[RMDB]
RNA sequence: GGGAACGACUCGAGUAGAGUCGAAAAACGUUGAUAUGGAUUUACUCCGAGGAGACGAACUACCACGAACAGUGGAAACUCUACCCGUGGCGUCUCCGUUUGACGAGUAAGUCCUAAGUCAACAUGCUGAGAGGGAUGUUCGCAUCCCUCAAAAGAAACAACAACAACAAC
Reactivity to DMS in 0.01 (KOAc 150mM, MgCl2 10mM, bicine 150mM(pH8.5), 24C), signal-to-noise 5, nucleotides 027 to 129: a020c190g010u040u010g010a030u010a090u000g040g010a050u000u000u000a050c000u040c010c040g040a080g030g000a000g020a000c020g030a050a040c000u030a260c060c010a020c010g030a020a050c160a100g020u170g020g060a000a000a000c020u030c000u040a150c220c140c000g030u020g000g000c040g020u020c020u020c000c020g050u000u030u020g010a150c300g010a000g020u050a040a020g080u020c000c000u030a010a090g010u050c010a030a010c010a120u040g040c020u030g010a190
Reactivity to 2A3 in 0.01 (KOAc 150mM, MgCl2 10mM, bicine 150mM(pH8.5), 24C), signal-to-noise 5, nucleotides 027 to 129: a010c110g010u000u000g000a000u010a000u030g000g000a000u000u000u000a000c000u000c000c010g020a040g010g000a000g050a000c000g000a020a030c080u180a060c130c000a000c000g020a070a010c040a060g020u000g030g000a010a010a010c020u030c010u010a040c000c010c010g000u000g000g000c000g000u010c000u010c020c010g010u120u080u090g000a000c010g000a000g000u000a000a000g000u000c000c000u000a010a000g000u000c000a000a000c010a010u110g060c040u080g020a070

Structure probing data (DMS and 2A3) for a 170-nucleotide construct. Conditions: 150 mM KOAc, 10 mM MgCl2 and 150 mM bicine (pH 8.5), 24 C. Values cover nucleotides 27 to 129. For DMS the reverse transcriptase was MarathonRT.